[RMDB]
RNA sequence: GGGAACGACUCGAGUAGAGUCGAAAAGUAUUUCAUUAUCUAUUUUGAGAUUUUUGGCUUCUAUCUAAAUCUACCCAUAAAUAUUAUGGUUUAACUUUAUAUUUCCACAAUCUAUCAUUUGAAGUGUUUUAUUUUUCUUAAGAUCUCAAAUGUAAAACCAUUAACAUGGUUUCGACCAUGUUAAUGGAAAAGAAACAACAACAACAAC
Reactivity to 2A3 in 0.01 (KOAc 150mM, MgCl2 10mM, bicine 150mM(pH8.5), 24C), signal-to-noise 1, nucleotides 027 to 156: g000u050a090u010u110u030c040a010u050u300a160u110c040u140a120u040u110u070u000g040a050g000a030u070u100u000u070u140g010g000c040u180u130c050u130a120u010c040u070a000a060a120u040c000u070a140c000c000c000a020u130a120a120a000u180a140u190u000a000u020g000g000u000u010u010a070a000c000u010u050u030a140u140a100u120u080u000c000c010a040c040a040a070u080c040u120a070u100c000a000u010u000u000g020a050a020g100u010g030u150u100u000u040a130u020u170u000u050u000c020u040u020a070a040g000a020u020c020u000c010a020a020a020u000g040u070a000a020a170a190